The record gives the reactivity of an RNA of 177 nucleotides to 2A3 and DMS. For 2A3, 2,791 sequencing reads were counted. The RNA was probed in 150 mM KOAc, 10 mM MgCl2 and 150 mM bicine (pH 8.5) at 24 C.
RNA sequence: GGGAACGACUCGAGUAGAGUCGAAAAGCUCUAGGAGACUAGAGCAAUACGUACGAGCGUUCGUGUCACUGAACUCAGAUAGCCAGUUCAGAGGCUGUCAAAGGACAUAGCUAUAGCUAUGUCCAAAGACGAUACAUAGCUUCGGCUAUGUAUCGUCAAAAGAAACAACAACAACAAC
Reactivity to 2A3 in 0.01 (KOAc 150mM, MgCl2 10mM, bicine 150mM(pH8.5), 24C), signal-to-noise 3, nucleotides 027 to 126: g000c000u000c000u000a000g000g050a090g030a040c010u010a000g010a000g000c000a000a010u080a030c010g030u020a000c010g000a000g010c010g000u000u010c030g010u010g030u040c000a010c100u020g010a020a020c010u010c030a000g030a260u060a050g070c080c030a010g000u020u010c000a010g050a050g060g000c020u050g090u090c050a160a110a020g000g010a000c000a000u000a000g000c010u150a080u070a300g000c000u000a000u000g000u000c000c000a010a000a000
Reactivity to DMS in 0.01 (KOAc 150mM, MgCl2 10mM, bicine 150mM(pH8.5), 24C), signal-to-noise 2, nucleotides 027 to 126: g000c000u010c000u010a010g000g000a150g030a220c000u010a030g000a000g000c000a020a000u000a150c070g000u030a070c050g010a020g000c040g000u000u000c000g020u000g000u020c020a030c030u000g000a020a000c030u010c060a110g030a070u090a090g030c120c180a060g020u000u050c120a010g000a050g000g000c050u020g000u010c070a050a140a140g050g000a010c000a030u000a000g000c000u020a100u020a160g000c000u000a000u000g000u000c000c000a000a010a000